[RMDB]
Description: The data come from the RNA Mapping Database (RMDB), library OK2TRN. Chemical mapping of a 177-nucleotide RNA with 2A3 and DMS. For 2A3 the reverse transcriptase was SuperScript II with manganese.

RNA sequence: GGGAACGACUCGAGUAGAGUCGAAAAAAAUCUGAGCAACAGCAUAAAACCACUUACCAUAGAUCAAGAAAAUGAUAUGUCUGGGGGUAUAAAAGAUCUUAACAUAGUCUGUCCUAUAACUGGAUCACGUUUAACUGUAGUUCGCUACAGUUAAACGAAAAGAAACAACAACAACAAC
Reactivity to 2A3 in 0.01 (KOAc 150mM, MgCl2 10mM, bicine 150mM(pH8.5), 24C), signal-to-noise 2, nucleotides 027 to 126: a010a010a030u060c040u060g010a020g010c030a030a100c010a000g000c040a030u150a080a130a030a010c080c010a040c030u030u010a080c000c010a090u080a070g040a030u070c050a130a030g060a120a220a070a080u120g000a010u030a040u120g070u030c010u030g040g000g000g010g000u050a030u100a200a090a020a040g040a010u020c030u090u090a040a050c010a020u010a020g040u000c090u070g050u050c020c020u120a100u040a150a080c050u070g030g010a020u070c040a000
Reactivity to DMS in 0.01 (KOAc 150mM, MgCl2 10mM, bicine 150mM(pH8.5), 24C), signal-to-noise 2, nucleotides 027 to 126: a060a110a060u010c000u010g000a110g020c070a070a090c070a040g000c020a070u000a070a070a120a070c050c030a070c070u000u000a060c050c060a060u000a040g000a100u000c020a030a090g000a030a060a070a050u000g010a060u000a000u000g000u000c060u000g010g010g000g020g030u000a070u020a030a040a070a040g010a050u000c020u000u020a050a100c060a060u000a040g000u000c030u000g000u000c020c010u000a050u010a020a090c130u000g010g000a060u010c080a150